RNA sequence: GGGAACGACUCGAGUAGAGUCGAAAACCACCGCAAUUCGUUGCGGUGGGAAGGUGCAAUUCGCUGUCUGCACCACAGACGGGCAAUCCGUCAAAGCGAAAACUGGAGGGUCAUUCGUGACCCUCAAUCAUGUGAAUGUAUUCGUACAUUCACAUGAAAAAGAAACAACAACAACAAC
Reactivity to 2A3 in 0.01 (KOAc 150mM, MgCl2 10mM, bicine 150mM(pH8.5), 24C), signal-to-noise 9, nucleotides 027 to 126: c000c000a000c000c000g000c000a020a040u070u070c210g060u130u020g000c000g000g000u010g000g000g010a040a070g010g000u010g010c030a110a230u090u040c010g000c020u020g060u100c060u040g000c000a000c000c010a010c020a020g000a000c000g000g010g050c150a170a150u240c000c000g000u000c000a020a030a000g010c010g010a010a000a010a080c140u160g130g000a000g000g010g010u010c010a020u060u100c180g100u050g000a000c000c000c000u000c000a000a000
Reactivity to DMS in 0.01 (KOAc 150mM, MgCl2 10mM, bicine 150mM(pH8.5), 24C), signal-to-noise 9, nucleotides 027 to 126: c000c000a000c000c000g010c000a010a020u000u010c180g030u000u000g020c000g010g020u000g000g010g000a030a030g000g010u000g010c010a050a210u010u000c020g030c010u010g010u000c050u000g000c010a020c010c010a040c050a210g000a010c000g000g000g020c290a130a130u010c000c000g010u000c000a020a300a040g000c000g000a040a060a130a080c210u010g010g000a010g000g010g000u000c000a040u000u010c190g020u000g000a010c000c000c000u000c000a020a040

Notes:
An RNA of 177 nucleotides, treated with 2A3 and DMS and read out base by base. The data come from the RNA Mapping Database (RMDB), library M2PK50. The reactions ran in a buffer of 150 mM KOAc, 10 mM MgCl2 and 150 mM bicine (pH 8.5), at 24 C. For 2A3, 55,816 sequencing reads were counted. For DMS the reverse transcriptase was MarathonRT.